[RMDB]
RNA sequence: GGGAACGACUCGAGUAGAGUCGAAAACCCAUCCGAAACGUACGGCUGUGCAUGCGAAAGGAUGGAGGCAUGCGAAAGGAUGGAGUAAUAGCGGUCGGCAUAGAGUUGGAUGGGAAAGCAUGCCGGCAUUAGUCACGGAUGGGAAAGCAUGCUUCAACGAUACCAGCCAUUUCGAUGGCUGGUAUCGAAAAGAAACAACAACAACAAC
Reactivity to 2A3 in 0.01 (KOAc 150mM, MgCl2 10mM, bicine 150mM(pH8.5), 24C), signal-to-noise 2, nucleotides 027 to 156: c000c000c010a000u000c010c000g080a140a150a140c090g150u230a050c110g030g000c000u050g030u110g040c000a020u000g020c010g100a110a060a130g110g010a070u110g080g010a020g000g000c040a030u060g030c050g080a080a050a000g070g020a060u050g030g000a030g060u160a060a060u040a150g070c080g000g010u040c030g020g000c000a050u090a040g090a030g000u100u090g010g000a060u030g070g000g020a040a000a000g000c000a000u030g010c000c000g000g010c010a020u080u250a050g000u040c040a000c030g000g000a010u020g000g000g010a030a000a000g050c040a050u120g000c020u070u070c020a020a030